[RMDB]
RNA sequence: GGGAACGACUCGAGUAGAGUCGAAAACGAUGGGGGAGAUGCUAGGAGUAGGCGGCGACCGAAGCGAGGAGGAAAGCAAAGAAAGCCACGGGGCUAGCGAGUGGAUGUUCCGCCCCAAGGGGAGCCGGCUAAUAAGGUUCUUCGGAACCUUAUUAGCAAAAGAAACAACAACAACAAC
Reactivity to DMS in 0.01 (KOAc 150mM, MgCl2 10mM, bicine 150mM(pH8.5), 24C), signal-to-noise 1, nucleotides 027 to 126: c030g070a090u020g020g000g000g060g050a110g000a060u000g000c080u030a040g000g020a060g040u000a090g010g000c040g000g010c090g020a080c010c040g020a090a120g000c060g010a060g030g030a080g010g010a040a060a090g010c070a130a040a150g010a050a090a120g010c040c000a070c140g000g010g010g020c010u000a040g000c080g000a120g030u000g000g000a090u010g000u000u000c060c040g000c010c000c000c010a140a100g000g000g000g000a140g010c070c060g000